An RNA of 177 nucleotides, treated with 2A3 and DMS and read out base by base. The RNA was probed in 150 mM KOAc, 10 mM MgCl2 and 150 mM bicine (pH 8.5) at 24 C.
RNA sequence: GGGAACGACUCGAGUAGAGUCGAAAAUGGCGCUUUUUUCGCUUGCCUUCCAGGCGACAUCGUGAAGCGCCCCUCAACGAAAAAAAAGCCAUCCACCAAGGGUUCAUAGGCUGUGGCGGGAGUGUAGCCUAAAAAUACACUUCGGUGUAUUUUUAGGAAAAGAAACAACAACAACAAC
Reactivity to 2A3 in 0.01 (KOAc 150mM, MgCl2 10mM, bicine 150mM(pH8.5), 24C), signal-to-noise 9, nucleotides 027 to 126: u130g020g000c020g010c040u040u030u040u020u040u060c020g010c020u020u040g020c010c060u150u080c080c020a010g000g000c000g020a040c040a210u190c110g110u090g110a040a000g000c000g010c000c000c000c000u130c040a110a110c110g110a130a020a050a020a000a000a000a020g010c020c010a040u030c020c000a030c040c040a100a090g080g010g010u100u070c050a080u150a120g080g000c040u040g030u020g080g010c020g000g010g010a060g020u090g030u070a050g020
Reactivity to DMS in 0.01 (KOAc 150mM, MgCl2 10mM, bicine 150mM(pH8.5), 24C), signal-to-noise 7, nucleotides 027 to 126: u020g000g010c000g010c040u000u010u000u000u010u010c000g000c110u000u010g000c180c070u010u030c200c060a060g000g020c010g010a040c300a050u010c200g010u020g010a040a040g000c020g020c020c010c050c010u010c070a090a110c120g000a000a000a000a050a040a070a110a080g010c010c010a060u010c030c040a100c090c070a090a080g010g000g010u010u010c080a080u020a110g000g010c040u000g010u000g000g010c060g000g000g000a070g010u010g000u010a060g000